An RNA of 177 nucleotides, treated with DMS and read out base by base. High DMS reactivity at an A or C suggests that its Watson-Crick edge is free. For DMS the reverse transcriptase was MarathonRT. Conditions: 150 mM KOAc, 10 mM MgCl2 and 150 mM bicine (pH 8.5), 24 C.
RNA sequence: GGGAACGACUCGAGUAGAGUCGAAAAUGAUUCAGUUUGCCUUGGUAGCCUUCUUUAUUGGGCGCGGUAAGACCCUUUUUUCGAUGAUUGUCGCAGUUGUGGGCAACCUGGUCAAUAUCGUUAUGGAGCAUGAUUAGCAGUUCGCUGCUAAUCAUGCAAAAGAAACAACAACAACAAC
Reactivity to DMS in 0.01 (KOAc 150mM, MgCl2 10mM, bicine 150mM(pH8.5), 24C), signal-to-noise 1, nucleotides 027 to 126: u010g000a040u000u000c020a030g020u000u000u000g010c010c010u000u000g050g000u010a140g010c010c020u000u000c100u000u000u000a090u000u000g000g030g030c050g030c070g010g000u000a080a060g000a190c170c010c050u020u020u000u040u040u000c100g020a050u030g010a200u000u000g020u000c040g000c070a030g020u020u010g020u010g000g000g000c010a030a030c060c000u000g000g000u000c000a030a070u020a070u000c070g050u000u010a090u000g010g030a300